[RMDB]
RNA sequence: GGGAACGACUCGAGUAGAGUCGAAAAGGCAGCAGGCCGGUGCUGACGGGUGCGCCCUUGAACAGCUCGUCGAUGCGCACGCCGCGCGGAUUCUUCGCGACCGGGCGCUUCGCGUUCAGCACGAGCACCCUAGCUAUCCCUUCGGGGAUAGCUAGGGAAAAGAAACAACAACAACAAC
Reactivity to DMS in 0.01 (KOAc 150mM, MgCl2 10mM, bicine 150mM(pH8.5), 24C), signal-to-noise 2, nucleotides 027 to 126: g010g010c050a110g000c150a110g000g010c030c040g020g010u010g010c000u000g000a040c020g000g010g000u000g000c030g010c000c010c010u020u000g000a060a160c160a140g000c160u000c130g010u030c040g020a110u020g000c010g020c160a100c230g010c130c070g010c020g030c030g010g000a120u000u000c060u000u000c060g000c010g030a090c130c210g000g010g010c000g020c020u000u000c010g010c040g000u000u010c030a030g020c020a030c060g010a110g020c010a160
Reactivity to 2A3 in 0.01 (KOAc 150mM, MgCl2 10mM, bicine 150mM(pH8.5), 24C), signal-to-noise 1, nucleotides 027 to 126: g060g020c020a070g000c040a010g140g070c060c000g020g010u020g010c030u010g000a010c020g060g040g000u000g000c030g000c050c000c000u050u180g150a080a070c070a070g000c060u030c010g200u090c020g010a120u110g000c020g010c030a030c140g130c090c060g050c040g010c000g000g040a040u190u040c030u100u140c040g040c000g000a030c030c040g000g010g020c000g020c000u160u300c120g070c020g060u100u060c000a010g000c020a010c010g000a000g000c050a090

An RNA of 177 nucleotides, treated with DMS and 2A3 and read out base by base. Reactivities are given for positions 27 through 126. For 2A3, 1,252 sequencing reads were counted. The RNA was probed in 150 mM KOAc, 10 mM MgCl2 and 150 mM bicine (pH 8.5) at 24 C. For 2A3 the reverse transcriptase was SuperScript II with manganese.